Chemical mapping of a 177-nucleotide RNA with 2A3 and DMS.
The DMS profile rests on 1,426 reads.
Reactivities are given for positions 27 through 126.
RNA sequence: GGGAACGACUCGAGUAGAGUCGAAAAUUCCCAAUUAUGUAAAAAGUGCGUAUCAUACGCACCUCAAAAUCAGCUGAAGCUGACAUAGAUUGAUUAAAGAGUACGGUUUUUUAGCCGUACUUUUUAUAAACCUUGUUCAGUUCGCUGAACAAGGUUUAAAAGAAACAACAACAACAAC
Reactivity to 2A3 in 0.01 (KOAc 150mM, MgCl2 10mM, bicine 150mM(pH8.5), 24C), signal-to-noise 2, nucleotides 027 to 126: u000u000c010c010c010a010a010u080u000a100u060g110u090a020a130a000a000a100g000u030g000c000g000u050a030u300c100a120u060a190c010g000c000a000c000c000u090c000a090a090a070a090u000c000a000g000c000u200g160a180a020g010c000u000g000a020c020a050u120a030g180a050u000u210g020a000u080u080a000a000a000g000a000g000u030a000c040g030g120u020u000u000u020u130u300a000g020c000c030g000u000a000c000u000u000u000u000u000a000u000
Reactivity to DMS in 0.01 (KOAc 150mM, MgCl2 10mM, bicine 150mM(pH8.5), 24C), signal-to-noise 1, nucleotides 027 to 126: u010u000c000c000c000a130a030u050u000a030u050g030u030a110a060a110a140a050g050u000g000c010g050u010a110u040c270a060u050a050c000g010c000a020c000c140u010c230a110a070a070a090u000c000a000g010c000u010g050a070a090g000c020u010g000a030c030a000u010a030g000a080u070u020g000a210u010u000a000a010a000g000a000g010u000a010c000g010g000u000u000u090u030u020u110a000g000c000c000g000u000a000c000u000u000u000u000u030a070u000